Structure probing data (DMS and 2A3) for a 177-nucleotide construct. 2A3 is a SHAPE reagent: it acylates the 2'-hydroxyl of flexible nucleotides of all four kinds. The RNA was probed in 150 mM KOAc, 10 mM MgCl2 and 150 mM bicine (pH 8.5) at 24 C. The 2A3 profile rests on 2,389 reads. For DMS the reverse transcriptase was MarathonRT.
RNA sequence: GGGAACGACUCGAGUAGAGUCGAAAAACGACAUAACCGUCCGUAACACUCGAAGCCGGUGGCCUCACACCUUGUGGAAGGGAGCCGUCGAGGGUGGGAUCGGCGAAUCGGACACAGUCAUCCGGAGAAUUUAUUAAAUAUUCGUAUUUAAUAAAUUAAAAGAAACAACAACAACAAC
Reactivity to DMS in 0.01 (KOAc 150mM, MgCl2 10mM, bicine 150mM(pH8.5), 24C), signal-to-noise 4, nucleotides 027 to 126: a090c070g020a060c100a080u020a090a160c100c040g020u000c010c000g010u000a090a190c030a030c000u000c020g000a160a200g000c100c010g020g000u000g000g000c010c020u010c070a270c050a040c060c130u000u040g030u010g010g000a140a080g000g000g010a300g010c010c000g000u000c000g000a210g010g010g020u000g000g000g000a020u040c040g010g020c160g000a070a060u010c020g000g000a080c050a090c060a110g000u010c030a180u010c020c000g010g030a200g000
Reactivity to 2A3 in 0.01 (KOAc 150mM, MgCl2 10mM, bicine 150mM(pH8.5), 24C), signal-to-noise 4, nucleotides 027 to 126: a010c040g030a010c030a070u250a050a080c010c030g040u040c000c000g020u050a030a010c010a010c020u030c020g040a040a010g000c000c010g020g020u040g050g220c010c000u150c020a030c000a020c010c070u090u190g020u030g040g030a030a050g060g010g020a020g020c010c000g010u010c000g020a090g000g030g000u040g030g020g010a130u100c040g010g010c020g020a010a030u140c020g000g020a020c050a010c010a090g050u040c010a020u000c010c010g030g010a080g060